[RMDB]
RNA sequence: GGGAACGACUCGAGUAGAGUCGAAAAAUAAAUAAAGUGUACCAAAUGGUAGGUACACACCAAGUGUGCGUUGGUCGCACACAACCAGCAGUCAAUAGAGACUGCAAAACCAAACCAAACAAAAAAAGACUAUUAAAGGAUUCGUCCUUUAAUAGUCAAAAGAAACAACAACAACAAC
Reactivity to 2A3 in 0.01 (KOAc 150mM, MgCl2 10mM, bicine 150mM(pH8.5), 24C), signal-to-noise 2, nucleotides 027 to 126: a010u040a020a010a020u110a000a080a020g000u000g000u000a030c010c000a030a100a180u170g070g020u030a070g000g000u000a000c000a000c000a000c000c020a120a170g010u010g000u000g010c000g100u100u170g300g140u230c000g000c000a020c000a000c010a010a070c000c000a020g000c000a010g000u000c020a010a090u100a300g160a010g000a100c000u000g010c000a020a050a000a010c050c020a030a040a010c010c020a050a020a150c040a060a130a040a000a000a000a060